[RMDB]
RNA sequence: GGGAACGACUCGAGUAGAGUCGAAAAGACAAUAGCGUAGGGAACCAAGCAAAGAGGUAAGAAAUCCCACGGUAGUAGGCUUGGUUCUAGCCGUGGGAAGAAGAAGUCCCACUCCCUACGCCGAUAACUCUGAAUACUUGUUCGCAAGUAUUCAGAGAAAAGAAACAACAACAACAAC
Reactivity to DMS in 0.01 (KOAc 150mM, MgCl2 10mM, bicine 150mM(pH8.5), 24C), signal-to-noise 4, nucleotides 027 to 126: g010a140c170a120a090u000a090g020c010g020u000a020g000g000g000a020a030c020c030a070a100g010c150a090a100a110g000a130g000g000u000a090a070g000a060a080a090u000c000c000c000a020c020g000g010u010a050g030u010a020g010g000c020u010u010g030g000u010u000c070u010a020g000c020c010g010u000g000g020g000a020a010g010a050a040g000a100a110g010u020c000c010c010a300c030u000c010c000c000u000a010c020g010c000c110g000a060u010a070a080
Reactivity to 2A3 in 0.01 (KOAc 150mM, MgCl2 10mM, bicine 150mM(pH8.5), 24C), signal-to-noise 2, nucleotides 027 to 126: g110a030c030a030a190u080a150g000c000g010u000a010g000g000g000a010a020c020c010a040a010g070c020a050a140a090g180a090g080g010u100a080a040g040a100a070a020u010c000c000c000a000c000g000g030u100a150g090u010a010g030g030c070u080u180g110g010u110u030c010u020a010g000c000c000g000u010g000g000g010a010a000g010a010a000g010a010a000g030u000c000c000c000a010c000u010c000c000c000u000a000c000g000c010c010g030a020u060a070a040